[RMDB]
RNA sequence: GGGAACGACUCGAGUAGAGUCGAAAAUCAGACUCCGCAUUUUACAUAUAGCAGACUCCAAGGGCCAGUCACCUGAACGGAUCAAGGCGUCCAGGCGGGCAUUACCCCAAACAACCGCCUCGACGACCAGAACACGAAGCACCUGCAUAUCAAAGUACGUUUAAACGGCAUUCGUGCCGUUUAAACGAAAAGAAACAACAACAACAAC
Reactivity to 2A3 in 0.01 (KOAc 150mM, MgCl2 10mM, bicine 150mM(pH8.5), 24C), signal-to-noise 1, nucleotides 027 to 156: u060c000a000g050a020c010u020c000c030g120c060a080u020u120u060u300a090c050a050u130a020u050a080g000c020a000g030a100c020u050c040c020a040a010g060g020g030c030c000a030g100u060c050a080c070c080u040g060a080a030c090g040g040a020u100c060a030a190g030g000c000g020u000c000c010a000g000g000c010g000g030g040c000a020u050u170a110c000c000c000c090a000a090a080c050a010a010c000c000g080c000c040u000c000g030a040c000g060a090c000c000a000g000a000a030c090a020c060g020a070a000g000c020a000c050c060u010g000c050a000u020a000u180c120a020a070a120g140u110a050